[RMDB]
RNA sequence: GGGAACGACUCGAGUAGAGUCGAAAAGUUGUACGCUCUUGUACACGAAUUAAUCUUGUACUUGUUCGAUCGUUUAAUGAAAAAAUAAUUGCAGUUGAACUGACAAAACUAUAUGUAUUAUGAAGACCUACGUUAGGGAAUUCGUUCCCUAACGUAGAAAAGAAACAACAACAACAAC
Reactivity to DMS in 0.01 (KOAc 150mM, MgCl2 10mM, bicine 150mM(pH8.5), 24C), signal-to-noise 3, nucleotides 027 to 126: g010u010u000g010u020a090c090g030c090u010c090u000u000g030u020a020c020a040c050g030a120a150u020u020a140a090u020c040u000u000g000u000a060c080u010u000g000u010u000c090g020a080u030c060g000u020u000u010a070a030u060g000a000a020a120a090a050a060u020a050a070u020u000g000c110a040g000u040u030g000a030a070c030u000g000a040c100a020a050a010a040c050u000a160u030a300u030g000u020a030u000u010a020u010g000a110a050g000a110c140
Reactivity to 2A3 in 0.01 (KOAc 150mM, MgCl2 10mM, bicine 150mM(pH8.5), 24C), signal-to-noise 5, nucleotides 027 to 126: g070u070u030g000u030a020c060g030c040u050c040u090u070g000u010a000c000a000c040g030a000a030u190u230a130a080u080c040u000u060g030u070a110c020u050u060g030u030u100c040g060a110u030c070g050u030u000u120a170a180u180g150a080a060a000a030a000a000u180a040a110u080u130g000c020a020g010u100u150g080a110a120c020u050g070a100c040a040a070a040a030c060u060a070u040a050u210g120u070a090u120u050a090u230g070a030a030g020a030c020

Structure probing data (DMS and 2A3) for a 177-nucleotide construct. The DMS profile rests on 4,102 reads. DMS adducts were read by reverse transcription with MarathonRT. For 2A3 the reverse transcriptase was SuperScript II with manganese.